The data come from the RNA Mapping Database (RMDB), library M2PK50. An RNA of 177 nucleotides, treated with 2A3 and DMS and read out base by base. The RNA was probed in 150 mM KOAc, 10 mM MgCl2 and 150 mM bicine (pH 8.5) at 24 C. Reactivities are given for positions 27 through 126. The DMS profile rests on 859 reads.
RNA sequence: GGGAACGACUCGAGUAGAGUCGAAAACCCAAAGCGUUCGCGCUUUGGGAAAGAAUAAACGAGCGAAAAGAAUGAUGUGGACGCUCCUAAAAACCACAUCAAAAAGUCAACGGUUCGCCGUUGACAAUCCACAUGUACAGUUCGCUGUACAUGUGGAAAAAGAAACAACAACAACAAC
Reactivity to 2A3 in 0.01 (KOAc 150mM, MgCl2 10mM, bicine 150mM(pH8.5), 24C), signal-to-noise 1, nucleotides 027 to 126: c000c000c000a000a020a000g010c010g050u060u140c180g000c000g000c040u010u000u000g020g000g000a090a110a030g040a030a070u160a190a160a060c170g000a000g040c010g040a040a010a060a090g140a090a210u220g000a010u020g010u020g000g030a060c020g050c000u100c180c040u040a050a020a000a030a040c000c000a000c000a000u000c000a010a000a010a030a000g000u010c010a000a000c000g010g070u030u060c200g010c060c000g000u000u000g000a000c000a000a020
Reactivity to DMS in 0.01 (KOAc 150mM, MgCl2 10mM, bicine 150mM(pH8.5), 24C), signal-to-noise 1, nucleotides 027 to 126: c000c000c000a000a000a000g030c000g040u020u060c150g000c020g030c000u010u000u000g050g000g000a020a040a070g020a120a050u000a050a060a070c120g030a080g040c050g030a060a030a110a120g000a120a020u010g010a000u000g010u000g000g020a270c070g000c050u000c010c050u000a010a030a110a150a060c000c000a020c020a010u000c000a110a030a090a080a050g000u000c000a000a000c000g000g000u000u010c280g000c000c000g020u000u030g000a010c010a030a060